About this RNA:
Chemical mapping of a 177-nucleotide RNA with 2A3 and DMS. For DMS the reverse transcriptase was MarathonRT. Source: RMDB library M2PK50, as collected in RNAgym. Reactivities are rounded to 0.1 and cut off at 0 and 3. Reactivities are given for positions 27 through 126.

RNA sequence: GGGAACGACUCGAGUAGAGUCGAAAAGGUGCGAUGUUCGCAUCGCACCAAAGAAGCUGAAAAUGACGCAAACAACGGCGUCAGCGUGAGCAAACGCGGAAAAAACCACUUGGUUCGCCAAGUGGAAGACAUCUCCACUGUUCGCAGUGGAGAUGUCAAAAGAAACAACAACAACAAC
Reactivity to 2A3 in 0.01 (KOAc 150mM, MgCl2 10mM, bicine 150mM(pH8.5), 24C), signal-to-noise 2, nucleotides 027 to 126: g000g010u000g020c000g050a000u010g030u060u040c130g000c070a000u000c000g000c000a000c010c000a000a000a000g020a000a000g020c100u170g050a020a030a080a140u110g000a000c010g020c030a110a100a200c080a100a070c130g070g030c000g000u000c010a030g000c000g030u080g020a080g010c070a100a040a000c040g000c000g090g000a070a060a000a020a010a040c000c000a010c010u020u010g020g000u070u040c150g020c050c010a000a000g000u000g020g000a000a000
Reactivity to DMS in 0.01 (KOAc 150mM, MgCl2 10mM, bicine 150mM(pH8.5), 24C), signal-to-noise 2, nucleotides 027 to 126: g030g020u010g020c000g010a040u000g020u000u010c120g000c000a000u020c000g020c010a000c000c000a010a030a030g030a150a090g000c010u040g000a100a060a080a120u000g030a060c000g010c050a060a080a120c270a060a150c240g000g010c010g000u000c000a010g010c000g000u020g010a110g020c010a060a120a090c070g000c050g000g000a000a040a060a150a130a120c010c010a010c000u000u000g000g020u000u010c180g010c010c020a010a000g000u000g010g010a020a030